RNA sequence: GGGAACGACUCGAGUAGAGUCGAAAAGGAUCGGCCCGACGCGAUCGACGGCCCUGGAUCGAUCCGACGAGCUGAUCGGCCGUACGUACGCGCCGGUACUCUCGGCCCAGGCCCACGGCCGGCCAUGCGCACUCAUUACCUUCGGGUAAUGAGUGCGAAAAGAAACAACAACAACAAC
Reactivity to 2A3 in 0.01 (KOAc 150mM, MgCl2 10mM, bicine 150mM(pH8.5), 24C), signal-to-noise 1, nucleotides 027 to 126: g050g010a050u010c000g020g000c010c000c010g020a030c020g080c120g020a110u050c020g010a040c030g150g030c050c040c020u060g060g030a160u030c030g000a010u020c000c000g000a020c010g000a000g000c070u050g010a020u030c000g000g010c030c000g100u180a140c080g060u080a030c070g100c060g040c030c000g070g030u110a210c080u070c030u040c130g000g000c000c130c030a050g050g040c000c030c000a030c000g040g000c040c000g030g020c030c010a060u140g150
Reactivity to DMS in 0.01 (KOAc 150mM, MgCl2 10mM, bicine 150mM(pH8.5), 24C), signal-to-noise 1, nucleotides 027 to 126: g050g000a060u000c010g000g020c070c030c010g020a140c070g000c150g000a070u000c090g030a100c110g000g050c030c010c070u020g000g030a130u000c070g000a010u000c000c040g000a160c000g000a030g030c100u010g000a000u000c060g000g000c000c000g000u000a090c300g010u010a010c050g000c250g030c030c010g000g010u000a100c120u000c110u000c050g010g010c010c070c080a090g030g030c060c000c020a050c270g000g000c060c060g000g010c140c010a150u000g000
The data come from the RNA Mapping Database (RMDB), library OK2TRN. Structure probing data (2A3 and DMS) for a 177-nucleotide construct. The RNA was probed in 150 mM KOAc, 10 mM MgCl2 and 150 mM bicine (pH 8.5) at 24 C. For DMS the reverse transcriptase was MarathonRT.